[RMDB]
RNA sequence: GGGAACGACUCGAGUAGAGUCGAAAAUAUGGGCAGUUCGCUGCCCAUACGAGCGGAGUCCGGCACUAUGAGCCCGCAGCGUUGGUGCGUUGCCGCGGUGCAGAGACCAAGCCUUCGGGCUUGGUAAACUAAAUCCGAGAUUCGUCUCGGAUUUAGUAAAAGAAACAACAACAACAAC
Reactivity to 2A3 in 0.01 (KOAc 150mM, MgCl2 10mM, bicine 150mM(pH8.5), 24C), signal-to-noise 3, nucleotides 027 to 126: u050a010u000g000g000g000c000a000g030u050u080c160g060c130u000g000c010c000c000a000u010a000c000g020a020g010c070g000g050a060g060u000c020c000g010g030c020a010c060u120a100u160g060a030g000c040c010c030g040c020a000g020c020g050u090u250g100g060u220g080c030g040u040u110g010c020c010g030c060g000g010u020g000c020a030g060a010g020a150c000c000a000a000g010c010c000u040u060c210g070g000g000c030u010u000g000g000u010a020a010
Reactivity to DMS in 0.01 (KOAc 150mM, MgCl2 10mM, bicine 150mM(pH8.5), 24C), signal-to-noise 5, nucleotides 027 to 126: u010a010u000g000g000g030c000a010g010u000u010c250g010c010u000g010c010c000c010a000u000a000c070g000a080g020c050g010g010a120g000u000c030c040g000g010c040a050c070u000a090u010g000a160g000c020c090c040g000c040a050g000c030g020u000u010g010g030u000g010c050g010u010u000g010c010c050g000c070g000g010u010g000c050a120g000a170g010a040c000c000a000a000g000c000c000u000u010c180g020g010g010c000u000u000g000g010u000a000a030